[RMDB]
RNA sequence: GGGAACGACUCGAGUAGAGUCGAAAACAGAAUGAUAUCAGCCUCCGACGUCAAGACUAUAUGAAUCGGAAAAAUGCGUAUAGUAUAAUUAAAUGGUUGGACUAUGUGGAAUCGAAACAAGGAGAGACCAUAAUCAUUAGUUCGCUAAUGAUUAUGGAAAAGAAACAACAACAACAAC
Reactivity to 2A3 in 0.01 (KOAc 150mM, MgCl2 10mM, bicine 150mM(pH8.5), 24C), signal-to-noise 8, nucleotides 027 to 126: c030a020g160a120a140u170g060a050u060a040u150c030a020g030c010c020u000c010c010g030a020c030g030u070c020a030a040g040a070c010u010a010u010a010u120g040a050a040u080c060g110g000a140a090a020a020a030u080g010c010g010u020a020u010a060g020u010a040u040a180a120u180u120a070a120a070u140g070g010u030u030g020g000a020c030u050a060u130g060u070g040g060a030a040u050c040g030a070a040a020c040a060a020g100g010a090g020a000g020a040
Reactivity to DMS in 0.01 (KOAc 150mM, MgCl2 10mM, bicine 150mM(pH8.5), 24C), signal-to-noise 9, nucleotides 027 to 126: c080a120g010a110a100u010g010a080u010a080u000c030a090g010c080c120u010c020c030g020a050c080g010u000c090a080a110g000a050c020u000a020u010a010u000g010a100a040u000c060g010g010a030a080a070a120a040u000g010c010g020u000a010u000a010g000u000a040u000a070a090u000u010a060a070a100u000g010g010u000u000g000g000a050c120u000a070u000g010u000g010g010a060a050u010c050g010a100a040a060c130a050a100g010g000a080g000a120g010a170